[RMDB]
RNA sequence: GGGAACGACUCGAGUAGAGUCGAAAAUUCAAGGAGAAGAAGGGCCAAUAAACGGCGGGGGUAACUAUGACCCUCUCAAGGUAGCGUAAUACCUAGCCGCUUAAUUGGCGGCUCGCAUGAAGGUUCAAGCCUACAUAACUUUCGAGUUAUGUAGGCUAAAAGAAACAACAACAACAAC
Reactivity to DMS in 0.01 (KOAc 150mM, MgCl2 10mM, bicine 150mM(pH8.5), 24C), signal-to-noise 5, nucleotides 027 to 126: u000u020c030a040a110g020g010a080g000a070a070g000a090a090g030g000g010c010c010a030a030u010a030a060a060c030g000g000c070g010g010g010g010g030u000a030a110c230u010a080u030g000a040c040c000c010u020c100u030c180a060a040g010g000u000a020g000c250g020u030a060a050u000a000c010c010u010a150g010c000c000g010c030u000u000a060a080u010u020g000g000c010g000g000c000u000c040g000c110a100u010g010a060a040g010g000u000u020c080a070
Reactivity to 2A3 in 0.01 (KOAc 150mM, MgCl2 10mM, bicine 150mM(pH8.5), 24C), signal-to-noise 4, nucleotides 027 to 126: u100u090c050a060a060g090g030a030g020a150a020g100a010a070g050g080g000c000c010a020a010u020a050a050a010c010g000g000c010g060g040g000g000g000u030a060a070c040u030a120u300g080a110c000c010c000u000c030u020c040a100a000g000g000u030a030g030c110g130u130a060a040u020a070c000c000u010a030g020c000c000g000c020u040u030a080a070u070u050g000g000c000g000g000c000u000c000g070c030a040u090g060a050a020g020g010u050u080c010a030